RNA sequence: GGGAACGACUCGAGUAGAGUCGAAAAUUUGAUGGGGAUUGAACCGGGGCAACGUUUAACUUUUUAUGACUUGAUGUUAGGCAUGGCGAUUGCCAGUGGUAAUGAUGCAUCGGUUGCGCUAGCCGAGUCCCGUUCUACUAUUCGUAGUAGAACGGGAAAAAGAAACAACAACAACAAC
Reactivity to 2A3 in 0.01 (KOAc 150mM, MgCl2 10mM, bicine 150mM(pH8.5), 24C), signal-to-noise 1, nucleotides 027 to 126: u110u060u110g050a050u130g040g130g000g000a020u000u090g080a060a050c040c120g000g050g000g000c020a010a000c010g040u000u080u090a060a040c030u060u000u060u140u210a090u180g110a080c030u060u090g040a020u180g130u110u050a040g020g020c020a010u030g060g000c040g090a150u000u160g010c050c040a060g010u030g060g020u040a120a030u130g080a050u160g030c000a030u030c020g020g000u050u090g080c030g000c050u020a000g090c000c010g010a000g000
Reactivity to DMS in 0.01 (KOAc 150mM, MgCl2 10mM, bicine 150mM(pH8.5), 24C), signal-to-noise 3, nucleotides 027 to 126: u010u010u010g000a090u010g000g000g000g000a090u020u020g000a140a100c080c030g000g000g010g020c050a030a040c160g030u000u000u010a050a080c070u000u000u010u000u000a070u040g010a030c060u000u000g010a060u010g010u000u000a040g010g000c040a070u020g010g000c030g010a090u000u010g000c020c010a070g020u010g010g010u000a050a060u020g010a140u020g000c050a050u010c020g030g010u000u000g010c050g000c090u000a080g020c020c040g010a100g010
Description
Conditions: 150 mM KOAc, 10 mM MgCl2 and 150 mM bicine (pH 8.5), 24 C. The record gives the reactivity of an RNA of 177 nucleotides to 2A3 and DMS. For 2A3, 751 sequencing reads were counted. Values cover nucleotides 27 to 126. The data come from the RNA Mapping Database (RMDB), library OK2TST. The DMS profile rests on 2,724 reads.